[RMDB]
RNA sequence: GGGAACGACUCGAGUAGAGUCGAAAAGGUUGCAUAUAGGAUGCUUUUGAGGCGAUGGAUGGAUUACCCUACUAGACCUUUUCAAAAGCCUUUCCAUCUGACAAGUUAGAUCCUAGAGCUCAUAUGGGCGUACAACACUCUUCGGAGUGUUGUACGCAAAAGAAACAACAACAACAAC
Reactivity to DMS in 0.01 (KOAc 150mM, MgCl2 10mM, bicine 150mM(pH8.5), 24C), signal-to-noise 1, nucleotides 027 to 126: g000g020u000u020g000c080a010u000a190u000a070g040g030a000u000g000c010u000u000u000u000g020a130g000g020c090g010a150u000g000g010a060u010g000g030a150u000u000a030c120c010c000u000a220c120u000a090g000a160c060c000u030u000u010u000c230a140a060a050a050g000c020c110u010u000u040c000c010a020u000c030u020g020a120c100a040a030g010u010u020a080g000a140u000c010c000u000a030g020a130g000c010u000c050a060u020a120u010g000g010